[RMDB]
An RNA of 177 nucleotides, treated with 2A3 and DMS and read out base by base. Reactivities are rounded to 0.1 and cut off at 0 and 3. 2A3 adducts were read by reverse transcription with SuperScript II with manganese.

RNA sequence: GGGAACGACUCGAGUAGAGUCGAAAAGAUAUGGAGGUCAAUGUGGAACUACGACUGUGAUCGGAAACGAUCACUGUCGCCGAAGACCUCCUAAGUCAAAAGCUUGCGAGGUUCGCCUCGCAAGCAAUCUAAGGGAAACGUUCGCGUUUCCCUUAGAAAAAGAAACAACAACAACAAC
Reactivity to 2A3 in 0.01 (KOAc 150mM, MgCl2 10mM, bicine 150mM(pH8.5), 24C), signal-to-noise 1, nucleotides 027 to 126: g000a010u000a000u070g010g010a020g010g010u000c050a140a160u230g130u300g140g000a250a300c230u220a090c300g000a000c010u010g030u000g020a010u020c000g000g000a000a010a040c010g000a000u000c000a010c010u000g000u000c000g000c010c000g000a080a040g000a000c000c010u000c010c000u000a000a000g000u000c010a060a070a000a210g000c000u000u010g000c000g010a000g000g040u100u170c270g140c120c010u000c000g000c010a000a010g000c000a010a000
Reactivity to DMS in 0.01 (KOAc 150mM, MgCl2 10mM, bicine 150mM(pH8.5), 24C), signal-to-noise 2, nucleotides 027 to 126: g010a020u000a100u000g000g000a020g000g020u000c010a040a090u030g020u020g000g030a240a160c190u020a300c010g010a000c010u000g000u010g000a000u000c030g020g000a030a030a060c000g000a010u010c000a000c000u000g020u000c000g000c000c020g010a150a210g000a030c000c010u000c000c010u000a000a070g000u000c010a150a090a110a120g010c000u000u000g000c020g030a020g000g030u000u010c200g010c010c000u000c000g030c000a000a000g000c020a010a010